[RMDB]
RNA sequence: GGGAACGACUCGAGUAGAGUCGAAAAAAUAUCACGAAUGACUCGGCACGGAUUACCGGCUGCGAGUACCAUGGGCGGAAUAUCUCUUGUCACAACACUGCCAGCACCAAUUACUGCACCAUGCCCAAUCGUGACACCCGCAGUUACCGUGCAAUUAUCCCCUAGUACUGUUCGCAGUACUAGGGGAAAAAGAAACAACAACAACAAC
Reactivity to 2A3 in 0.01 (KOAc 150mM, MgCl2 10mM, bicine 150mM(pH8.5), 24C), signal-to-noise 1, nucleotides 027 to 156: a010a000u270a040u080c060a040c080g040a060a220u090g100a050c050u000c180g110g030c000a000c030g030g000a100u010u300a100c130c290g000g000c000u010g000c050g010a000g030u030a070c000c030a050u080g010g030g000c040g040g000a020a000u090a100u040c080u100c120u240u020g080u200c030a020c000a130a120c180a110c110u070g140c020c000a020g000c000a010c000c000a000a090u070u050a050c010u010g090c010a060c090c000a050u010g000c060c000c000a000a050u090c050g030u000g070a020c020a080c000c010c010g000c020a000g000u000u020a060c000c000g020u000g060c010a010a010u100u070a060